[RMDB]
RNA sequence: GGGAACGACUCGAGUAGAGUCGAAAACUGCCUUGGGAUGUAUAAGACAGAGGAAUUCUGCCUCCUGGGGGCUAAACUGAGCUAUAGGAGGUCUGCCCUUGAACUAGUUAGUUCAUGCAUCAAGACCCACCAGGGAGUGGUUCGCCACUCCCUGGUGAAAAGAAACAACAACAACAAC
Reactivity to DMS in 0.01 (KOAc 150mM, MgCl2 10mM, bicine 150mM(pH8.5), 24C), signal-to-noise 1, nucleotides 027 to 126: c060u020g000c020c010u000u000g020g000g030a020u000g000u000a130u000a070a070g000a040c080a050g020a040g010g020a130a130u000u000c040u010g020c000c020u010c020c040u000g000g000g000g000g000c030u000a050a130a080c230u000g000a080g020c060u000a160u000a030g000g000a080g010g000u000c080u000g000c210c130c010u010u000g000a000a020c010u000a110g020u010u000a090g020u010u000c020a030u000g020c020a060u000c070a090a080g000a050c060c040
Reactivity to 2A3 in 0.01 (KOAc 150mM, MgCl2 10mM, bicine 150mM(pH8.5), 24C), signal-to-noise 2, nucleotides 027 to 126: c010u040g030c030c000u030u050g070g040g010a000u060g070u090a140u020a280a100g040a060c070a040g050a050g060g190a060a050u190u020c050u000g000c000c000u000c010c000u000g010g010g060g140g000c000u040a170a030a200c170u130g160a020g070c030u040a050u120a050g040g030a000g000g040u020c050u040g030c010c010c000u000u040g010a010a000c000u020a070g300u300u130a000g010u060u030c040a030u060g000c000a020u090c010a040a050g030a120c030c000